[RMDB]
RNA sequence: GGGAACGACUCGAGUAGAGUCGAAAACCGGAAGGUGGGGUUUCCGAUGCUACUCGUGAAGCUGAAAGAAAGAACGCUAUCAUUCCUUUUACGGAAGACCCAUACGCUUGUAGUAAUCCACUACUGGUUAAGAAAAGAAUGGAGCGCAAUCCUUUCAACUCACCCUAUAGUUCGCUAUAGGGUGAGUAAAAGAAACAACAACAACAAC
Reactivity to 2A3 in 0.01 (KOAc 150mM, MgCl2 10mM, bicine 150mM(pH8.5), 24C), signal-to-noise 1, nucleotides 027 to 156: c020c000g060g190a120a070g040g120u210g020g150g030g030u020u020u000c020c000g000a010u040g070c000u000a020c000u000c030g040u040g030a070a050g060c060u040g040a040a070a060g060a000a070a010g040a250a080c000g000c010u130a140u300c010a020u000u040c000c000u100u090u070u140a080c060g030g040a070a070g080a150c010c040c040a010u060a110c030g000c020u040u100g010u010a000g000u010a030a270u130c060c010a050c000u000a000c010u010g020g000u070u050a050a050g040a050a090a020a000g010a000a000u000g000g000a010g000c000g000c020a040a000u000c000c020u030u050u020c010a030